[RMDB]
RNA sequence: GGGAACGACUCGAGUAGAGUCGAAAACUCGACUUCGGUCGAGAGAACAGAUAUGGAAGCGUUGUUAGUGAGGCACUCGGGUGGUUCGGAAACGAACCAUCUCUAGCGUGGUGCUCUAACACCGCUUCCUAAGUCGCGUAGACUCCUUCGGGAGUAAAUCUGGUUAGAGAUUCGUCUCUAACCAGAUAAAAGAAACAACAACAACAAC
Reactivity to 2A3 in 0.01 (KOAc 150mM, MgCl2 10mM, bicine 150mM(pH8.5), 24C), signal-to-noise 4, nucleotides 027 to 156: c000u000c000g010a000c010u050u090c300g090g000u000c010g000a010g000a000g000a070a080c080a090g010a040u070a030u160g000g000a000a000g000c000g000u020u010g000u010u020a060g030u090g300a160g050g050c000a000c010u020c020g030g000g000u000g020g000u010u000c000g030g000a100a080a030c000g000a000a000c020c010a000u000c020u040c060u080a050g060c070g150u180g050g020u010g030c020u030c000u120a000a000c000a010c000c000g000c000u010u000c000c000u000a000a000g000u000c010g000c040g060u080a060g050a120c000u010c010c010u070u100c190g110g000g010a010g000u060a060a130
Reactivity to DMS in 0.01 (KOAc 150mM, MgCl2 10mM, bicine 150mM(pH8.5), 24C), signal-to-noise 2, nucleotides 027 to 156: c020u000c000g010a010c020u000u010c290g060g000u000c000g010a020g010a130g000a140a080c060a150g000a110u000a300u000g020g030a030a000g010c000g040u000u000g020u000u000a020g010u000g020a160g010g000c000a030c020u000c050g020g010g020u000g020g030u020u010c000g000g010a130a120a260c010g020a020a020c000c000a000u000c000u000c060u000a040g040c180g010u000g030g000u000g020c000u000c020u020a020a020c000a030c040c000g000c000u010u000c000c010u000a010a060g000u000c030g000c090g010u000a210g000a050c010u000c000c000u020u000c220g040g030g040a050g060u000a040a090